[RMDB]
RNA sequence: GGGAACGACUCGAGUAGAGUCGAAAAGAUAUGGAGUACGGGAGCGCAUACUUCCCUCGGAAACGAGCAGUAUGAACUACGCUUUGUACUCCUAAGUCAAAGGCCAGCUAGUUCGCUAGCUGGCCAAGAUGGUUGAGAUCUUCGGAUCUCAACCAUCAAAAGAAACAACAACAACAAC
Reactivity to 2A3 in 0.01 (KOAc 150mM, MgCl2 10mM, bicine 150mM(pH8.5), 24C), signal-to-noise 1, nucleotides 027 to 126: g020a020u060a010u090g000g000a010g010u000a010c060g110g090g050a020g000c100g000c050a000u010a020c000u030u080c110c010c010u010c010g000g020a010a040a030c000g010a000g000c010a000g010u010a010u040g040a100a110c210u170a000c230g020c010u070u060u080g010u010a010c000u000c000c000u000a070a000g000u030c060a030a030a140g010g000c010c000a000g000c000u020a000g030u080u040c260g000c180u020a000g000c000u010g000g000c010c000a030a000
Reactivity to DMS in 0.01 (KOAc 150mM, MgCl2 10mM, bicine 150mM(pH8.5), 24C), signal-to-noise 1, nucleotides 027 to 126: g000a040u030a300u000g000g000a020g010u000a020c010g020g020g010a010g000c010g000c000a030u010a010c010u000u010c190c260c000u010c000g030g000a080a100a220c010g020a010g020c220a050g030u000a000u000g000a180a120c120u030a300c010g020c000u000u000u000g020u000a000c010u000c000c000u000a030a040g000u000c030a050a140a120g000g000c010c000a000g000c010u000a000g010u000u010c210g030c000u000a010g000c000u000g020g040c000c000a000a030